An RNA of 177 nucleotides, treated with DMS and 2A3 and read out base by base. The reactions ran in a buffer of 150 mM KOAc, 10 mM MgCl2 and 150 mM bicine (pH 8.5), at 24 C. The 2A3 profile rests on 1,875 reads.
RNA sequence: GGGAACGACUCGAGUAGAGUCGAAAAGAUAUGGAUCAUGACAGCUUUUGACGGACCCACAUCGGAAACGAUGUGGUGUCCGAUAAGCUGCAUGAUCCUAAGUCAAAGAAACGGUUCGCCGUUUCAAGUCUGAUAAUGCCUUCGGGCAUUAUCAGACAAAAGAAACAACAACAACAAC
Reactivity to DMS in 0.01 (KOAc 150mM, MgCl2 10mM, bicine 150mM(pH8.5), 24C), signal-to-noise 1, nucleotides 027 to 126: g000a060u010a120u020g010g000a000u000c000a020u030g010a210c040a020g040c000u000u000u030u000g030a290c120g020g000a030c020c020c000a010c000a000u010c010g000g010a100a070a070c000g030a000u010g010u000g000g000u010g000u000c000c000g030a010u040a000a050g030c000u000g010c000a010u000g000a010u000c000c000u010a010a060g000u000c000a070a150a220g000a020a020a000c010g000g000u000u020c300g030c010c000g010u000u000u000c000a130a120
Reactivity to 2A3 in 0.01 (KOAc 150mM, MgCl2 10mM, bicine 150mM(pH8.5), 24C), signal-to-noise 1, nucleotides 027 to 126: g000a010u050a010u130g000g030a000u010c000a000u050g200a300c010a000g020c000u120u000u300u300g300a300c120g020g020a010c000c010c000a000c000a010u000c000g030g010a020a010a040c000g000a010u000g000u010g000g000u000g000u030c020c000g000a000u000a030a000g000c010u010g040c000a000u010g000a000u010c000c000u020a000a000g000u010c050a140a000a210g000a030a020a000c000g060g050u050u140c300g070c060c010g000u000u000u000c010a000a030

For DMS the reverse transcriptase was MarathonRT.